[RMDB]
RNA sequence: GGGAACGACUCGAGUAGAGUCGAAAAGGGCGACGGGGGCACGCCCAGUGCCCCGCCACUCUCCAUGUCCACAGCAGCGAGGGUGGAGGGCCCUGUGCUGUGCAGGGCAGAGCUCGGCUGCACCUGGAUGACUAGUGCUAUUCGUAGCACUAGUCAUAAAAGAAACAACAACAACAAC
Reactivity to DMS in 0.01 (KOAc 150mM, MgCl2 10mM, bicine 150mM(pH8.5), 24C), signal-to-noise 4, nucleotides 027 to 126: g000g000g030c000g020a110c120g030g020g030g000g020c000a020c020g010c010c030c010a300g010u000g000c010c000c000c010g010c010c010a030c000u000c000u000c000c120a180u000g010u010c040c150a090c250a120g010c000a060g010c280g010a030g000g000g020u000g000g010a060g000g000g000c000c010c000u000g010u000g010c070u010g010u000g000c000a030g000g000g000c010a050g000a130g010c060u000c050g000g010c010u000g000c010a090c020c040u010g010g020
Reactivity to 2A3 in 0.01 (KOAc 150mM, MgCl2 10mM, bicine 150mM(pH8.5), 24C), signal-to-noise 2, nucleotides 027 to 126: g000g010g030c050g020a130c120g080g000g000g030g040c030a000c000g020c010c050c020a000g010u000g000c000c000c020c020g000c000c000a010c010u020c000u040c010c010a060u050g030u010c120c100a120c060a080g050c000a010g000c010g060a030g020g010g010u020g000g020a030g020g060g000c000c010c000u040g080u060g010c150u100g060u130g080c030a050g010g010g000c030a030g020a010g020c040u050c070g110g000c020u000g000c030a180c070c030u050g070g070